[RMDB]
RNA sequence: GGGAACGACUCGAGUAGAGUCGAAAAUCGAGCGCCGACGGAUCUGCGAAGGUGCGCUUCUCGAUACCGCGAUAGGUGUCCAGUGACUUGACACGCUCGGCGCGCAGCGCGGUGACUUGGGUAUACAGAGGACCUAGUGAUUCGUCACUAGGUCCUCAAAAGAAACAACAACAACAAC
Reactivity to DMS in 0.01 (KOAc 150mM, MgCl2 10mM, bicine 150mM(pH8.5), 24C), signal-to-noise 2, nucleotides 027 to 126: u020c050g020a080g000c300g030c020c000g000a170c010g000g000a040u000c060u010g020c220g000a090a090g030g030u010g030c020g030c070u000u010c060u000c100g020a060u000a040c010c010g000c070g000a140u010a060g020g000u000g020u010c010c120a010g040u010g010a140c170u000u010g010a100c130a110c020g000c060u010c240g020g000c070g000c010g060c090a100g000c030g000c020g010g020u000g000a110c140u000u000g010g000g020u020a120u000a110c170a140
Reactivity to 2A3 in 0.01 (KOAc 150mM, MgCl2 10mM, bicine 150mM(pH8.5), 24C), signal-to-noise 1, nucleotides 027 to 126: u070c030g000a000g000c080g000c020c040g000a040c010g030g090a140u070c090u190g090c030g010a080a050g080g010u050g030c060g040c030u020u050c010u030c000g000a000u040a080c010c020g000c030g050a010u050a150g040g020u010g000u010c010c000a020g010u000g140a110c110u150u150g050a030c050a000c110g020c010u050c040g000g020c010g000c000g000c000a040g000c010g000c000g000g000u010g010a020c000u030u040g110g030g030u160a080u030a120c100a080